[RMDB]
Conditions: 150 mM KOAc, 10 mM MgCl2 and 150 mM bicine (pH 8.5), 24 C. This 177-nucleotide RNA was probed chemically with 2A3 and DMS. The DMS profile rests on 1,287 reads. Source: RMDB library M2PK90, as collected in RNAgym.

RNA sequence: GGGAACGACUCGAGUAGAGUCGAAAAGGGUUUGGAUUACAUCAAUAGUAACAUGAGCAGAAGUAAACAGAACAAGAAGUACUGCGGUUAUUCAAGUUCAAAGUUCACACUAUCGCAAUAAUGGGAAUAUCAACGUUCGAUUCGUCGAACGUUGAUAAAAAGAAACAACAACAACAAC
Reactivity to 2A3 in 0.01 (KOAc 150mM, MgCl2 10mM, bicine 150mM(pH8.5), 24C), signal-to-noise 1, nucleotides 027 to 126: g020g000g010u060u070u030g080g030a070u010u120a060c000a040u140c100a120a070u100a100g020u020a090a030c020a110u050g040a020g010c020a020g050a110a010g000u070a020a010a030c030a040g020a010a000c000a040a060g040a020a000g040u020a000c020u010g070c030g110g000u000u010a040u050u050c010a060a010g000u000u000c020a150a030a010g000u040u040c010a040c000a000c060u070a060u120c020g020c130a100a050u050a110a020u070g030g090g040a000a020
Reactivity to DMS in 0.01 (KOAc 150mM, MgCl2 10mM, bicine 150mM(pH8.5), 24C), signal-to-noise 2, nucleotides 027 to 126: g010g020g000u020u010u010g020g010a180u030u000a050c090a080u020c090a050a080u000a070g010u000a060a080c090a080u000g000a110g000c040a010g010a040a060g010u000a070a050a110c070a070g000a020a040c010a070a300g010a080a060g000u000a030c020u000g040c160g010g000u000u000a110u000u000c020a060a300g000u020u010c040a040a050a090g000u000u000c090a020c060a090c040u000a050u000c080g000c110a070a050u000a030a030u000g020g000g000a100a130